[RMDB]
Chemical mapping of a 177-nucleotide RNA with DMS and 2A3. For DMS the reverse transcriptase was MarathonRT. Reactivities are given for positions 27 through 126. The RNA was probed in 150 mM KOAc, 10 mM MgCl2 and 150 mM bicine (pH 8.5) at 24 C.

RNA sequence: GGGAACGACUCGAGUAGAGUCGAAAAUAGAGACCCCUGUAGUUCCGGCCGUAAACUAUGCCAACUGGGUGUUACGUAGUGGUACCCACGAGAAAUCAAGUAUAUGGGCUAUGGGGAUAGUACGAUCCCAUCCAUCAUUUUUCGAAAUGAUGGAUGGAAAAGAAACAACAACAACAAC
Reactivity to DMS in 0.01 (KOAc 150mM, MgCl2 10mM, bicine 150mM(pH8.5), 24C), signal-to-noise 7, nucleotides 027 to 126: u020a110g000a220g020a090c070c000c010c010u000g010u010a040g010u000u030c070c050g020g020c060c120g020u010a050a080a040c040u000a040u010g000c140c030a060a300c300u000g010g000g020u000g010u000u000a020c010g010u030a080g020u000g010g010u000a020c010c000c010a030c060g010a300g000a040a090a080u030c070a060a060g020u020a070u010a060u020g000g010g000c000u000a020u000g010g000g000g020a040u020a020g020u010a070c070g000a120u010c070
Reactivity to 2A3 in 0.01 (KOAc 150mM, MgCl2 10mM, bicine 150mM(pH8.5), 24C), signal-to-noise 9, nucleotides 027 to 126: u150a010g120a000g030a030c000c000c000c000u010g010u010a010g000u150u300c030c040g030g050c030c040g110u100a070a110a050c060u060a070u290g030c030c010a030a010c040u020g000g030g010u030g030u030u020a090c190g100u150a060g040u060g030g010u020a010c000c010c010a010c040g050a070g070a060a070a030u130c050a060a000g060u040a080u030a070u300g030g010g000c000u000a010u010g020g000g000g020a000u050a020g030u030a030c030g020a030u050c010